[RMDB]
RNA sequence: GGGAACGACUCGAGUAGAGUCGAAAAAAACUUCAUCUCACGCGGAGUUACCUGAUACACAACCGUACACCAUGCCGCAUCCCAAACUCGAACACGGUGCUCCUCCUCGCGCUUUACCGCAGGCCCGGCACAAUUGUGCCUUCGGGCACAAUUGUGCAAAAGAAACAACAACAACAAC
Reactivity to 2A3 in 0.01 (KOAc 150mM, MgCl2 10mM, bicine 150mM(pH8.5), 24C), signal-to-noise 1, nucleotides 027 to 126: a000a000a000c000u030u000c100a100u070c020u020c020a030c060g060c080g030g010a030g010u000u030a070c010c010u050g020a010u130a080c180a000c000a090a150c000c010g030u050a070c040a010c000c010a000u050g050c010c000g050c040a090u160c030c000c000a000a060a040c120u040c050g000a030a040c040a020c050g040g000u020g030c000u010c010c020u000c000c000u020c020g020c000g010c000u170u120u000a040c050c030g000c000a030g000g030c010c000c020g050

Structure probing data (2A3) for a 177-nucleotide construct. The data come from the RNA Mapping Database (RMDB), library OK1LIB. 2A3 adducts were read by reverse transcription with SuperScript II with manganese.